Chemical mapping of a 177-nucleotide RNA with 2A3.

[RMDB]
RNA sequence: GGGAACGACUCGAGUAGAGUCGAAAAGGUCCAUCGGACCAUGGCGCAGGCAGCUCCUGGCCUGGCAAGACCUUUGACCACGAAGCCUCCGUUUUGGCCGGGGAUGCGUCGUGGUCAAUCGUCUCUGGCGGCUAACGUACUUCGGUACGUUAGCCGCAAAAGAAACAACAACAACAAC
Reactivity to 2A3 in 0.01 (KOAc 150mM, MgCl2 10mM, bicine 150mM(pH8.5), 24C), signal-to-noise 1, nucleotides 027 to 126: g010g010u030c000c000a150u210c290g030g000a010c000c000a000u000g080g000c180g000c000a000g010g020c090a130g080c060u080c040c020u020g000g040c000c000u000g000g060c080a020a020g010a040c000c000u000u000u000g010a030c020c020a030c000g020a020a000g000c000c000u030c000c130g050u000u020u210u170g080g000c080c030g000g000g060g000a000u150g000c050g040u010c000g000u000g000g000u000c000a000a000u000c000g000u000c000u000c000u060g110